[RMDB]
RNA sequence: GGGAACGACUCGAGUAGAGUCGAAAAAUAUCAACGUAGUAUACAGAUAGUAGGAGCUGAUUGUGGUUCAACAGCACUUUAUUUCUUGUUAAGAGGAGCAUCAUUCGUCGUUCAGUAUGAGAAAGAAGAACACCUACGAAAAAAAUGGGAAGAAGUAAGCCUUAUGCAUAUUCGUAUGCAUAAGGCUAAAAGAAACAACAACAACAAC
Reactivity to DMS in 0.01 (KOAc 150mM, MgCl2 10mM, bicine 150mM(pH8.5), 24C), signal-to-noise 2, nucleotides 027 to 156: a170u000a040u000c050a140a080c050g010u010a100g020u000a170u000a250c060a150g000a170u010a060g000u010a080g000g020a240g000c030u010g010a050u000u010g030u000g020g060u000u010c030a130a110c060a030g020c050a170c030u010u000u000a080u010u000u000c040u000u010g010u000u000a080a130g020a070g000g020a060g000c050a140u000c110a140u000u000c000g010u000c060g010u000u010c000a090g040u010a100u000g000a110g020a050a070a060g000a050a100g000a070a090c040a050c080c000u000a100c030g010a030a000a090a010a060a140a200u010g000g010g010a100a020g000a030a060g000u000a080
Reactivity to 2A3 in 0.01 (KOAc 150mM, MgCl2 10mM, bicine 150mM(pH8.5), 24C), signal-to-noise 2, nucleotides 027 to 156: a000u120a010u120c020a040a070c020g030u050a060g060u070a100u070a260c050a060g030a070u100a040g050u050a050g020g050a020g020c000u030g000a280u010u070g020u060g050g090u120u170c050a040a040c000a060g020c000a010c000u000u110u110a140u120u160u050c070u150u120g030u080u090a120a080g020a030g110g010a030g030c040a050u040c020a030u020u090c030g140u010c020g030u100u030c010a030g040u020a030u100g040a040g060a070a030a010g030a040a000g010a020a000c000a020c000c000u040a030c060g000a210a000a000a000a000a000a100u080g040g000g030a140a000g000a010a020g030u060a050
Chemical mapping of a 207-nucleotide RNA with DMS and 2A3. It was measured as part of the RMDB library OK3TST. For DMS the reverse transcriptase was MarathonRT. The 2A3 profile rests on 917 reads. 2A3 adducts were read by reverse transcription with SuperScript II with manganese.